[RMDB]
An RNA of 177 nucleotides, treated with 2A3 and DMS and read out base by base. For 2A3, 12,014 sequencing reads were counted. For 2A3 the reverse transcriptase was SuperScript II with manganese. Reactivities are given for positions 27 through 126. DMS adducts were read by reverse transcription with MarathonRT.

RNA sequence: GGGAACGACUCGAGUAGAGUCGAAAAGAUAUGGAUCUCGUGAACUCAACAGCUUUCCUCGGAAACGAGGAAAGACAUGAGUGAACACGAGGAUCCUAAGUCAAAAGGCCAAGCUUCGGCUUGGCCAGUUUUGAAUUAAGUUCGCUUAAUUCAAAACAAAAGAAACAACAACAACAAC
Reactivity to 2A3 in 0.01 (KOAc 150mM, MgCl2 10mM, bicine 150mM(pH8.5), 24C), signal-to-noise 4, nucleotides 027 to 126: g050a020u110a060u190g010g000a010u000c000u010c010g000u000g050a090a050c010u010c020a030a160c020a250g030c000u000u010u000c000c000u010c020g020g020a080a070a050c010g010a010g000g020a000a000a000g000a000c000a100u080g010a010g060u090g060a100a020c010a000c020g010a060g150g030a010u010c000c010u000a110a010g070u050c040a030a040a100a230g020g000c010c000a000a010g000c000u090u300c300g100g000c000u000u000g000g030c000c000a010
Reactivity to DMS in 0.01 (KOAc 150mM, MgCl2 10mM, bicine 150mM(pH8.5), 24C), signal-to-noise 6, nucleotides 027 to 126: g010a080u000a300u010g000g010a010u000c000u000c000g010u000g020a120a050c010u000c010a030a100c300a210g000c000u000u000u000c000c000u000c010g010g000a100a110a200c010g010a010g010g000a000a000a010g000a020c100a110u000g000a030g000u000g000a160a120c000a010c010g000a050g000g000a010u000c000c000u000a040a110g010u010c060a080a100a150a110g000g010c000c000a010a000g010c000u000u020c290g020g020c000u000u000g000g010c000c000a010
It was measured as part of the RMDB library TTRDES.